[RMDB]
RNA sequence: GGGAACGACUCGAGUAGAGUCGAAAAGGGGUCUAACAGGAUACUUGGAUUUAGAGGUUUACUGAAGCCUCCACGGUAAACUACCCACCUUGUCAGUAUCUGGGUUAGACGGAGGCACCCAAAGUGAAAUAUGGCAGUUCGCUGCCAUAUUUCACAAUCAGUAGACACACUUCGGUGUGUCUACUGAAAAAGAAACAACAACAACAAC
Reactivity to 2A3 in 0.01 (KOAc 150mM, MgCl2 10mM, bicine 150mM(pH8.5), 24C), signal-to-noise 1, nucleotides 027 to 156: g070g000g070g030u030c010u030a010a000c050a080g040g040a010u030a000c060u210u210g020g090a120u300u240u200a110g060a080g010g000u000u000u000a010c000u000g020a090a000g000c010c000u010c000c000a000c010g000g000u040a010a000a000c020u040a040c080c060c000a120c080c010u110u150g060u110c030a010g010u030a020u040c010u130g300g000g000u030u000a000g010a000c010g000g000a000g000g030c010a020c000c030c010a080a120a040g000u000g010a000a000a000u000a000u010g000g020c000a000g000u080u110c210g130c100u000g000c000c000a000u000a000u000u000u000c010a000c010a000a000